Chemical mapping of a 207-nucleotide RNA with 2A3 and DMS. DMS adducts were read by reverse transcription with MarathonRT. The reactions ran in a buffer of 150 mM KOAc, 10 mM MgCl2 and 150 mM bicine (pH 8.5), at 24 C. For 2A3 the reverse transcriptase was SuperScript II with manganese.
RNA sequence: GGGAACGACUCGAGUAGAGUCGAAAAUACUUAGUACGCGCGUAGUUGCAGGCAUUCCGGGUGCAGCAACUGACGCGGAAGACUUUUCCUAGAGUGUGCGCUUCAACUGGCGUGCUGAGUAGUGCACGAAUUGCACGUACGUUCGCGUACGUGCAAACAAGACAGUUAAGUUCGCUUAACUGUCUUGAAAAGAAACAACAACAACAAC
Reactivity to 2A3 in 0.01 (KOAc 150mM, MgCl2 10mM, bicine 150mM(pH8.5), 24C), signal-to-noise 6, nucleotides 027 to 156: u100a000c020u020u020a000g010u010a000c010g010c010g020c020g040u020a010g010u000u000g000c050a140g100g020c010a040u100u100c130c180g190g060g000u030g010c020a020g000c010a010a020c020u070g140a030c010g000c010g010g010a000a020g110a060c040u130u150u040u010c000c000u010a020g000a020g050u110g000u010g020c020g020c020u060u070c060a170a160c100u080g030g000c010g000u010g000c000u000g000a010g010u050a010g010u010g020c000a000c030g040a080a080u050u020g000c000a010c010g000u000a000c000g010u010u070c200g000c000g090u000a000c000g000u000g000c000a000a000a000
Reactivity to DMS in 0.01 (KOAc 150mM, MgCl2 10mM, bicine 150mM(pH8.5), 24C), signal-to-noise 3, nucleotides 027 to 156: u000a060c090u000u000a060g020u010a090c030g020c000g010c030g030u000a060g030u000u000g010c000a190g010g010c020a030u000u010c010c280g040g020g080u000g000c020a300g020c010a020a050c020u000g020a020c020g000c020g000g020a090a140g020a090c110u000u000u000u010c010c030u000a080g000a140g030u000g030u000g030c050g010c030u000u000c050a080a100c110u020g030g010c040g020u000g020c010u000g000a070g000u000a050g040u000g010c020a050c040g010a080a170u000u000g010c010a000c020g010u000a000c000g030u000u020c290g000c030g050u000a000c000g020u000g010c010a000a010a120